Chemical mapping of a 177-nucleotide RNA with 2A3 and DMS. Conditions: 150 mM KOAc, 10 mM MgCl2 and 150 mM bicine (pH 8.5), 24 C. The data come from the RNA Mapping Database (RMDB), libraries RFM100 and RFMREP. 2A3 adducts were read by reverse transcription with SuperScript II with manganese.
RNA sequence: GGGAACGACUCGAGUAGAGUCGAAAAAGCGAAAGACGAGUGAGAAACUCGUCCGCCGAAUGACCAAGGGUUCCUGGGCCAGGUUAAUCCGCCCAGGGUGAGUCGGGACCUAAGGCGAGGCCGACAGCCCAUAGUGAGGGUUCGCCCUCACUAUGGGAAAAGAAACAACAACAACAAC
Reactivity to 2A3 in 0.01 (KOAc 150mM, MgCl2 10mM, bicine 150mM(pH8.5), 24C), signal-to-noise 6, nucleotides 027 to 126: a010g120c100g050a190a140a020g010a000c000g000a010g010u040g010a100g150a080a180a030c000u000c000g000u000c000c010g000c000c000g060a110a100u140g020a030c000c020a060a090g120g030g000u060u080c000c000u010g020g000g010c070c100a090g050g030u090u230a090a100u160c010c010g010c000c000c010a000g000g000g000u020g010a010g000u010c000g020g010g040a090c000c000u040a040a030g060g010c110g030a050g040g040c010c010g030a010c030a030g030
Reactivity to DMS in 0.01 (KOAc 150mM, MgCl2 10mM, bicine 150mM(pH8.5), 24C), signal-to-noise 3, nucleotides 027 to 126: a140g020c010g010a140a200a120g000a010c040g010a030g000u030g000a150g000a110a140a000c000u000c000g010u000c010c010g000c120c000g000a060a140u070g010a160c000c030a080a150g000g000g000u060u030c000c000u000g000g010g000c020c200a150g080g000u000u070a080a150u040c020c020g040c010c000c000a000g000g000g020u020g000a020g010u000c010g000g000g010a150c000c000u000a110a160g020g020c070g000a120g010g030c030c020g000a090c090a120g000